This 170-nucleotide RNA was probed chemically with 2A3 and DMS. 2A3 adducts were read by reverse transcription with SuperScript II with manganese.
[RMDB]
RNA sequence: GGGAACGACUCGAGUAGAGUCGAAAACGCUUAAAUAAGCUCCUGCAUUGGUCUGAUCAAACCAUAUGCUACAAGGAUAGUGUGUUUUAUGUUGUAAAGAAUAGUACAGCUUUUCCAUUUGAAACACUUAGUGACUACUUCGGUAGUCACAAAAGAAACAACAACAACAAC
Reactivity to 2A3 in 0.01 (KOAc 150mM, MgCl2 10mM, bicine 150mM(pH8.5), 24C), signal-to-noise 9, nucleotides 027 to 129: c030g000c030u060u130a130a060a030u190a180a020g030c030u010c010c000u000g020c000a010u000u010g000g000u010c040u080g140a230u160c080a050a050a030c000c000a030u030a020u300g000c000u070a090c060a120a030g030g020a040u070a160g140u120g020u010g000u050u000u020u010a050u060g060u030u000g030u050a030a070a050g130a190a090u120a070g070u070a020c010a020g010c000u020u010u030u000c010c030a080u080u070u140g150a130a090a000c040a000c050u040u040a010
Reactivity to DMS in 0.01 (KOAc 150mM, MgCl2 10mM, bicine 150mM(pH8.5), 24C), signal-to-noise 6, nucleotides 027 to 129: c120g040c030u070u030a080a090a120u070a090a090g020c090u000c000c040u020g000c000a050u020u030g010g050u040c050u040g060a140u140c180a140a170a040c040c030a060u080a020u070g010c050u100a010c090a140a000g060g000a050u030a080g060u070g000u000g010u040u000u030u000a050u000g000u040u030g010u030a050a100a060g010a090a060u040a130g030u010a030c090a040g000c000u010u010u010u090c000c020a110u000u000u000g020a110a070a020c090a000c030u010u030a110
Reactivities are given for positions 27 through 129. DMS adducts were read by reverse transcription with MarathonRT. The reactions ran in a buffer of 150 mM KOAc, 10 mM MgCl2 and 150 mM bicine (pH 8.5), at 24 C. Source: RMDB library 15KLIB, as collected in RNAgym.